[RMDB]
RNA sequence: GGGAACGACUCGAGUAGAGUCGAAAAGAUAUGGAAUGGCCAUGGAGCUUCAAUCGGAAACGAUGAGCUAUGAAGUGGCCCAUUCCUAAGUCAAACGUAGUUGCUCGGUUCGCCGAGCAACUACGAACAGAUCACCACUGUUCGCAGUGGUGAUCUGAAAAGAAACAACAACAACAAC
Reactivity to DMS in 0.01 (KOAc 150mM, MgCl2 10mM, bicine 150mM(pH8.5), 24C), signal-to-noise 1, nucleotides 027 to 126: g010a040u010a300u000g020g000a010a020u000g000g000c000c000a020u000g020g000a010g020c000u000u000c120a120a050u000c000g010g000a140a050a130c010g030a000u000g000a030g000c000u010a180u000g010a120a160g010u000g010g020c080c070c070a000u010u000c000c000u000a010a110g000u000c010a080a030a250c030g000u000a000g000u000u000g020c000u000c000g030g010u000u000c270g000c000c000g000a000g000c000a000a000c000u000a000c010g000a060a110
Reactivity to 2A3 in 0.01 (KOAc 150mM, MgCl2 10mM, bicine 150mM(pH8.5), 24C), signal-to-noise 1, nucleotides 027 to 126: g020a000u030a000u080g020g000a000a020u030g050g040c000c000a030u020g100g050a010g020c000u300u160c130a110a290u000c040g000g050a030a120a000c010g000a000u030g010a020g000c020u090a300u300g170a200a030g010u000g020g070c070c010c000a010u000u000c000c000u000a070a010g050u050c030a090a060a110c020g000u000a000g030u010u000g000c020u000c010g000g060u160u140c300g030c100c080g000a010g000c000a000a000c020u000a000c000g010a000a000
Description: Chemical mapping of a 177-nucleotide RNA with DMS and 2A3. Source: RMDB library TTRDEL, as collected in RNAgym. The 2A3 profile rests on 1,374 reads.